[RMDB]
RNA sequence: GGGAACGACUCGAGUAGAGUCGAAAAGAGCAGAGCAGCAGGGCUCGGACUGAGCAGAGCUCUGCCUUUUCUCAGAGCCCGCGGGUUGGAUGACUGCACCACUGCACGCGUGUGUGCCUGUGAAUGUGCAGGUGCUUAUUUACCUAUAACUGCAUGAGCGUAUAAUCAGGUUCGCCUGAUUAUACGCAAAAGAAACAACAACAACAAC
Reactivity to 2A3 in 0.01 (KOAc 150mM, MgCl2 10mM, bicine 150mM(pH8.5), 24C), signal-to-noise 3, nucleotides 027 to 156: g050a010g010c030a010g000a000g020c020a010g010c020a030g010g120g030c000u020c030g060g100a120c290u270g030a010g080c010a040g030a000g030c000u000c000u030g000c010c000u010u030u010u000c010u000c020a050g010a030g040c000c030c000g000c010g010g030g020u040u080g060g000a110u090g040a060c010u010g000c000a000c000c020a030c020u020g000c000a000c000g070c110g090u200g050u110g000u000g100c030c060u070g020u030g070a200a210u170g000u010g000c010a010g010g020u020g030c020u110u090a100u150u160u050a050c030c020u070a040u090a210a120c060u150g000c070a090u130g060a000
Reactivity to DMS in 0.01 (KOAc 150mM, MgCl2 10mM, bicine 150mM(pH8.5), 24C), signal-to-noise 1, nucleotides 027 to 156: g010a170g050c000a030g020a030g010c090a130g010c070a170g000g030g030c000u000c020g050g050a300c100u010g000a120g020c030a160g010a290g000c040u000c000u000g000c000c000u040u000u000u000c020u020c040a110g010a140g000c000c000c030g030c070g000g010g000u000u000g010g000a150u000g000a090c000u000g010c040a030c010c020a010c020u000g010c030a050c020g030c300g010u000g050u000g060u000g000c010c020u000g000u000g000a190a120u010g030u000g020c010a020g000g040u000g030c060u010u010a120u000u010u000a130c100c060u000a050u020a100a100c060u000g000c000a100u010g000a300